[RMDB]
RNA sequence: GGGAACGACUCGAGUAGAGUCGAAAACUCUGUCUGUGCAUCUCUGUCUUCACAUGGCAGUCUACUCACUGGAACGUUAGUCAUAUUGGAUUUAGAAUCUACCCCACUCCAAUAUGACCUCAUCCUAGCGUAUACGAGUCUUCGGACUCGUAUACGCAAAAGAAACAACAACAACAAC
Reactivity to 2A3 in 0.01 (KOAc 150mM, MgCl2 10mM, bicine 150mM(pH8.5), 24C), signal-to-noise 2, nucleotides 027 to 126: c050u060c010u020g010u010c020u010g100u100g040c040a090u030c040u000c010u160g210u050c040u070u120c030a010c020a070u030g000g000c000a020g010u020c010u000a020c000u020c040a000c050u080g000g040a090a120c050g090u060u070a080g000u000c000a000u040a000u000u000g000g020a020u040u030u120a230g090a200a100u120c070u160a150c000c040c000c010a080c030u000c000c000a000a000u010a020u000g010a020c000c010u020c000a100u030c010c020u020a050